[RMDB]
RNA sequence: GGGAACGACUCGAGUAGAGUCGAAAAGAAUUUCACCAUCGUCCACGUGAAUGAGGUUCCGACCGAGUGUACGGAUAUUAACACCGCACGUGGUGCCGCGGGUUUUGGAUCUACUGGGAUUUAAGUCAGGGAACCUUUGGUUCCCGUCGGGACGAAGUGCCAUCCAAAUAUUCGUAUUUGGAUGGCAAAAAGAAACAACAACAACAAC
Reactivity to DMS in 0.01 (KOAc 150mM, MgCl2 10mM, bicine 150mM(pH8.5), 24C), signal-to-noise 2, nucleotides 027 to 156: g010a070a130u000u000u000c030a090c020c050a170u010c080g010u010c030c010a050c070g010u000g020a060a070u000g030a070g010g020u010u000c010c010g010a120c020c070g040a170g060u010g000u000a060c000g010g010a110u000a100u010u000a140a180c040a120c010c000g020c020a040c020g010u030g010g030u000g040c020c050g000c050g000g020g010u000u000u000u020g020g010a100u000c050u000a120c000u000g010g010g000a150u010u000u000a060a180g030u000c020a140g030g030g000a000a010c010c040u000u000u000g060g010u010u000c010c000c000g020u000c000g000g000g000a070c020g020a100a190g030
Reactivity to 2A3 in 0.01 (KOAc 150mM, MgCl2 10mM, bicine 150mM(pH8.5), 24C), signal-to-noise 1, nucleotides 027 to 156: g050a050a110u000u050u110c060a080c040c000a110u080c110g000u020c030c000a000c020g000u030g010a050a140u130g020a100g040g020u020u110c010c050g010a050c010c060g070a080g030u210g030u090a140c040g000g030a010u010a120u100u200a170a000c030a020c030c000g030c010a000c050g030u060g020g000u010g020c090c050g000c120g020g000g010u020u000u020u120g080g000a010u050c030u050a100c050u090g040g020g040a140u100u030u200a060a070g050u100c040a080g000g000g000a020a000c000c000u010u070u210g000g000u010u000c000c000c030g000u010c000g000g010g010a000c010g120a080a000g200